[RMDB]
RNA sequence: GGGAACGACUCGAGUAGAGUCGAAAACUCGGCGACGAUCGCGAGAUCCGCGCGAUCCUGGUGCAGCAGGCCGAUCGGAUCCGCGUGAAAGCCCGACACGAUGUCGAGCUCCACUUCCGGCCAGCGACACUCAUCGCAGUUUCGACUGCGAUGAGUGAAAAGAAACAACAACAACAAC
Reactivity to 2A3 in 0.01 (KOAc 150mM, MgCl2 10mM, bicine 150mM(pH8.5), 24C), signal-to-noise 1, nucleotides 027 to 126: c000u020c030g030g060c040g040a110c050g020a080u050c020g020c010g050a150g010a190u000c010c010g000c010g000c010g030a010u060c010c060u080g030g000u220g050c060a060g010c020a000g040g000c000c000g030a030u060c000g030g000a000u000c000c010g030c060g020u010g030a070a020a000g040c000c030c050g040a000c000a010c130g300a160u200g010u020c050g010a010g010c040u010c020c020a100c030u120u000c030c000g040g000c000c010a030g020c040g050a010
Reactivity to DMS in 0.01 (KOAc 150mM, MgCl2 10mM, bicine 150mM(pH8.5), 24C), signal-to-noise 2, nucleotides 027 to 126: c010u000c010g030g010c070g040a060c140g020a140u010c010g040c010g000a200g000a010u000c000c000g000c050g040c080g030a040u020c010c030u030g030g010u000g000c040a110g000c000a050g010g010c300c000g010a020u000c020g000g010a030u000c000c100g010c030g000u000g000a050a060a150g000c020c000c030g000a020c060a110c150g010a140u010g000u000c020g000a090g030c020u000c110c030a120c100u000u000c050c070g030g010c050c000a090g000c090g020a300